[RMDB]
This 177-nucleotide RNA was probed chemically with 2A3. Values are in units of 0.01, from 0 to 300, in steps of 10. The reactions ran in a buffer of 150 mM KOAc, 10 mM MgCl2 and 150 mM bicine (pH 8.5), at 24 C. For 2A3, 379 sequencing reads were counted. It was measured as part of the RMDB library OK1LIB. For 2A3 the reverse transcriptase was SuperScript II with manganese.
RNA sequence: GGGAACGACUCGAGUAGAGUCGAAAAUGCGCACUGGCCACAUUGUACUUGAAACGCUAAAGAGGUACCAUUCGUAUGUGUUGGCCCUGGUAUUUACUCUGGGGGUCACGUGCUACGACCAAAUCAACCCAGCGGCAUGUUUCGACAUGCCGCUGGGAAAAGAAACAACAACAACAAC
Reactivity to 2A3 in 0.01 (KOAc 150mM, MgCl2 10mM, bicine 150mM(pH8.5), 24C), signal-to-noise 1, nucleotides 027 to 126: u010g000c020g000c020a000c050u150g000g000c000c000a000c000a000u000u090g000u000a020c000u000u050g060a090a240a020c020g010c110u240a300a000a120g130a000g040g010u060a060c000c000a020u070u260c060g120u150a260u300g020u000g050u140u270g000g000c000c000c000u000g000g010u040a070u040u180u050a120c160u140c060u040g030g000g000g020g000u000c000a050c290g000u110g000c000u040a070c070g000a000c000c000a000a180a000u150c060a000a000